[RMDB]
RNA sequence: GGGAACGACUCGAGUAGAGUCGAAAAUUCGAUAGCCUCUGCGGCCCCGGUGGCGCGAUCCACCACGGUAGCCACGCCGACAACCUCACCACCCACGUCUUGGACGGCGUGCACCGCCGUCAGCGCGACCCCGUUGCCUAUUCGUAGGCAACGGGGUAAAAGAAACAACAACAACAAC
Reactivity to 2A3 in 0.01 (KOAc 150mM, MgCl2 10mM, bicine 150mM(pH8.5), 24C), signal-to-noise 1, nucleotides 027 to 126: u210u060c060g010a080u170a060g000c030c030u040c110u120g010c050g030g010c060c000c000c050g080g010u060g000g030c080g000c030g110a060u050c000c010a040c030c000a020c040g000g050u070a030g000c000c000a030c070g010c000c000g080a000c060a060a000c000c000u040c000a070c010c030a010c000c020c000a030c010g050u050c140u190u060g150g000a000c000g000g000c000g020u080g110c060a060c000c000g010c000c000g000u000c000a000g010c010g040c060g060